[RMDB]
RNA sequence: GGGAACGACUCGAGUAGAGUCGAAAAUGGUGGCCGCGAUCGAGGACUGCGCUCGUGUGGAGGCGGCUGCGAGCGCCCGGCGGUUGUCGGCGAUCGCCGAGCUGACCGGCCGGCGCACCGGCGCGGAACUCGGGGCAGUAUUCGUACUGCCCCGAGUAAAAGAAACAACAACAACAAC
Reactivity to 2A3 in 0.01 (KOAc 150mM, MgCl2 10mM, bicine 150mM(pH8.5), 24C), signal-to-noise 2, nucleotides 027 to 126: u160g020g030u040g030g030c000c020g040c030g040a220u130c020g020a070g090g040a070c040u070g000c050g010c020u110c070g060u140g020u060g160g100a150g030g020c000g010g020c020u020g010c000g030a020g030c030g000c040c000c010g040g000c040g000g060u080u080g070u120c060g040g020c030g020a080u100c040g000c000c020g000a000g000c060u060g070a050c000c000g040g040c000c010g010g000c030g000c000a010c000c030g020g000c010g000c000g000g000a010
Reactivity to DMS in 0.01 (KOAc 150mM, MgCl2 10mM, bicine 150mM(pH8.5), 24C), signal-to-noise 2, nucleotides 027 to 126: u000g030g000u000g000g030c000c000g020c000g000a040u020c030g000a100g000g010a230c120u020g020c000g030c010u030c110g020u030g010u010g020g000a220g030g000c010g000g000c010u000g000c020g000a120g000c050g000c070c030c000g020g000c000g020g010u010u010g030u000c080g000g010c040g010a050u030c050g040c000c050g000a030g000c070u010g020a200c300c020g010g060c010c020g010g000c030g030c010a060c000c030g020g000c020g000c010g010g000a200